[RMDB]
RNA sequence: GGGAACGACUCGAGUAGAGUCGAAAAGUGCAUUAUGCCCCUUUUGCUCAUGUUGAAGACAAAACUGCUGAAACUGUAAAUGAAUCAGCGUAGCGUAAGCGGUUGGUGGGAAAGAGGAAAUGGUGGCUCAUGAAAAGUUAUUUUAGGCAUGACGGAGCACUUCUAACGGUUUCGACCGUUAGAAGUGAAAAGAAACAACAACAACAAC
Reactivity to 2A3 in 0.01 (KOAc 150mM, MgCl2 10mM, bicine 150mM(pH8.5), 24C), signal-to-noise 5, nucleotides 027 to 156: g050u060g020c040a070u120u120a070u300g040c020c000c000c020u040u040u050u120g020c020u010c010a040u080g010u080u050g090a090a010g030a030c030a020a180a050a040c030u090g010c000u030g030a080a050a030c030u040g040u190a030a070a120u100g040a010a020u050c010a020g030c060g030u050a000g020c030g020u030a110a020g010c000g020g040u080u060g030g050u070g010g030g020a040a090a020g030a030g010g030a010a060a030u060g020g010u060g020g000c010u040c020a050u120g040a050a070a010a000g030u060u080a100u080u170u080u100a050g000g010c010a020u040g010a020c080g050g010a010g090
Reactivity to DMS in 0.01 (KOAc 150mM, MgCl2 10mM, bicine 150mM(pH8.5), 24C), signal-to-noise 2, nucleotides 027 to 156: g000u000g010c040a140u000u010a120u000g020c020c010c010c070u000u010u000u010g030c020u010c060a110u000g010u000u000g040a120a170g010a180c030a060a040a090a100c040u020g020c000u000g000a150a050a220c050u000g010u010a060a110a170u000g000a090a300u000c020a080g020c030g000u000a060g030c030g030u010a180a100g020c020g030g020u000u000g010g000u000g000g010g010a020a030a050g020a080g000g000a010a040a080u000g000g020u000g000g010c030u010c060a130u000g000a050a080a060a120g030u000u000a080u000u020u000u000a060g030g010c000a030u020g000a130c020g000g030a110g000
Chemical mapping of a 207-nucleotide RNA with 2A3 and DMS. The data come from the RNA Mapping Database (RMDB), library OK3TST. 2A3 adducts were read by reverse transcription with SuperScript II with manganese. The RNA was probed in 150 mM KOAc, 10 mM MgCl2 and 150 mM bicine (pH 8.5) at 24 C.